[RMDB]
RNA sequence: GGGAACGACUCGAGUAGAGUCGAAAAGAGUAUGAGCUGGAUAGAGAAAUAGAUGUAAAACAAGAAAAUGCAGUUUAUGAACAUGUAAAAAAUGAGCAGGUUAUACUUAUAGAGUCAUGUUGGAAGAAUGCACUUAAACAAAUUAAAAAAGAUAAAACAUUAUGCUAGCAUUCGUGCUAGCAUAAUGAAAAGAAACAACAACAACAAC
Reactivity to DMS in 0.01 (KOAc 150mM, MgCl2 10mM, bicine 150mM(pH8.5), 24C), signal-to-noise 2, nucleotides 027 to 156: g020a220g020u000a080u000g030a080g010c030u000g010g060a070u010a130g000a100g000a110a050a130u010a060g010a080u000g090u010a060a020a030a110c080a080a060g040a030a040a090a090u010g010c030a120g040u000u010u000a070u010g000a080a050c060a030u000g010u000a000a000a070a060a050a080u010g000a080g030c040a070g020g050u000u010a090u010a030c050u010u000a090u000a060g000a170g020u010c010a050u000g010u000u000g010g020a060a120g010a090a020u000g020c010a020c050u000u000a080a030a220c000a050a020a070u010u010a000a110a050a060a050a120g000a150u000a070a060a080a160
Reactivity to 2A3 in 0.01 (KOAc 150mM, MgCl2 10mM, bicine 150mM(pH8.5), 24C), signal-to-noise 2, nucleotides 027 to 156: g050a010g060u060a060u140g040a010g020c020u020g060g000a030u100a080g050a000g070a040a060a030u040a060g070a030u040g010u070a050a030a000a010c000a050a050g050a070a090a020a010u060g000c000a020g000u070u100u050a090u050g010a010a020c010a030u030g030u050a040a010a000a000a070a070u090g010a040g020c000a000g010g000u040u050a070u010a060c010u020u010a040u040a160g020a010g070u030c010a040u030g030u040u050g000g000a000a040g000a070a000u030g010c020a030c020u050u090a050a020a000c020a010a030a050u050u230a100a070a070a000a030a000g060a060u170a110a100a000a000
This 207-nucleotide RNA was probed chemically with DMS and 2A3.
For 2A3, 1,322 sequencing reads were counted.
The data come from the RNA Mapping Database (RMDB), library OK3TST.
2A3 adducts were read by reverse transcription with SuperScript II with manganese.